An RNA of 207 nucleotides, treated with 2A3 and DMS and read out base by base. The 2A3 profile rests on 1,472 reads.

[RMDB]
RNA sequence: GGGAACGACUCGAGUAGAGUCGAAAAUUGGAUGCAGGGUUACCAUAAGCCUUCAAUUUGUAUAAAACACAGUAUCUGCAAAGGAUAGUGAAGUAGAGCACAAUAAAGCCAGGCUUAUCUAUCUAUCUAUCUAUCUAUGAAUGAGAUCACACCAUUAAGUAAAUACCUGGUUCGCCAGGUAUUUACUAAAAGAAACAACAACAACAAC
Reactivity to 2A3 in 0.01 (KOAc 150mM, MgCl2 10mM, bicine 150mM(pH8.5), 24C), signal-to-noise 2, nucleotides 027 to 156: u040u010g030g000a010u030g000c000a010g060g000g070u100u110a110c050c000a040u070a140a030g000c000c000u030u040c020a060a080u020u010u110g070u020a160u090a130a110a060a010c090a010c040a050g060u060a020u060c040u080g060c010a010a100a010g060g000a010u010a020g030u050g040a040a010g010u040a010g000a010g040c060a030c020a150a060u120a180a040a000g020c030c030a050g010g080c030u050u040a040u020c020u010a040u000c010u020a010u000c000u000a050u000c000u010a060u000c020u010a080u090g120a100a050u150g010a070g040a010u090c100a020c000a000c150c020a100u240u300a020
Reactivity to DMS in 0.01 (KOAc 150mM, MgCl2 10mM, bicine 150mM(pH8.5), 24C), signal-to-noise 2, nucleotides 027 to 156: u000u000g010g020a080u000g010c060a110g000g030g050u000u020a180c040c010a110u000a060a110g020c010c020u000u030c010a030a130u020u000u030g010u000a160u000a090a050a060a070c060a080c040a140g050u000a040u010c030u010g050c080a090a140a200g000g000a010u000a010g040u000g000a150a120g010u010a070g000a110g000c050a060c080a090a050u010a090a050a080g050c030c120a100g030g000c030u010u000a030u010c030u000a090u000c020u000a120u000c020u000a080u000c040u000a060u000c030u000a090u000g010a060a110u020g010a110g020a060u000c030a030c050a080c050c010a060u000u000a050